[RMDB]
RNA sequence: GGGAACGACUCGAGUAGAGUCGAAAACUAAGCUUCAGGUAUAAGGUACCUGUACCGUAAACCGACACAGGUAGUCGAGGAGAGUAUCCUCAGGCGCUCGAGUGAUUCAUGGCUAAGGAACUCGGCACAGAUGUUUUUAAUUCGUUAAAAACAUCUGAAAAGAAACAACAACAACAAC
Reactivity to DMS in 0.01 (KOAc 150mM, MgCl2 10mM, bicine 150mM(pH8.5), 24C), signal-to-noise 8, nucleotides 027 to 126: c040u010a090a110g010c070u010u010c040a060g010g010u010a060u020a090a130g010g000u010a010c010c040u010g010u010a070c040c020g010u010a050a100a100c110c010g000a120c080a050c060a070g010g000u010a030g030u000c050g010a020g020g000a020g000a170g010u030a070u000c010c010u000c020a110g010g010c050g020c040u010c040g010a060g020u010g000a150u020u010c070a050u020g010g010c050u010a090a110g000g000a120a080c040u000c030g010g010c080a250
Reactivity to 2A3 in 0.01 (KOAc 150mM, MgCl2 10mM, bicine 150mM(pH8.5), 24C), signal-to-noise 9, nucleotides 027 to 126: c020u050a090a020g050c020u090u070c020a020g020g040u040a120u050a210a090g170g020u020a040c000c000u010g030u040a060c010c010g090u110a030a040a070c040c010g080a020c020a000c010a060g090g040u130a070g050u080c020g010a010g020g010a020g000a020g070u200a080u040c000c000u020c020a010g030g010c020g000c020u090c070g080a070g030u030g040a160u070u050c060a070u170g060g000c030u060a050a060g040g010a040a040c030u020c050g020g000c030a010